The record gives the reactivity of an RNA of 177 nucleotides to 2A3. The 2A3 profile rests on 833 reads. The data come from the RNA Mapping Database (RMDB), library OK1LIB. 2A3 adducts were read by reverse transcription with SuperScript II with manganese.
RNA sequence: GGGAACGACUCGAGUAGAGUCGAAAACGCACGUUAAAGAUCUCCCAUGGCCGCUCACGUGGACGGCGGCACUUGGGCAAGCGCACAAGCAGCCGACUACUGCGCCGCAACAUUCUCGUGGUCCACGACGCGGUACGGCAUUCGUGCCGUACCGCGUAAAAGAAACAACAACAACAAC
Reactivity to 2A3 in 0.01 (KOAc 150mM, MgCl2 10mM, bicine 150mM(pH8.5), 24C), signal-to-noise 1, nucleotides 027 to 126: c020g000c000a050c020g010u090u120a160a130a000g090a170u080c100u000c120c070c000a010u000g040g010c020c000g000c020u020c000a080c040g000u000g040g000a000c000g000g000c000g000g020c010a140c030u010u040g030g000g000c070a150a060g050c000g000c020a000c080a130a070g070c020a000g020c000c060g050a050c030u090a010c030u090g020c020g030c050c010g060c060a050a010c020a170u070u070c080u050c060g030u080g010g000u000c000c000a000c010g000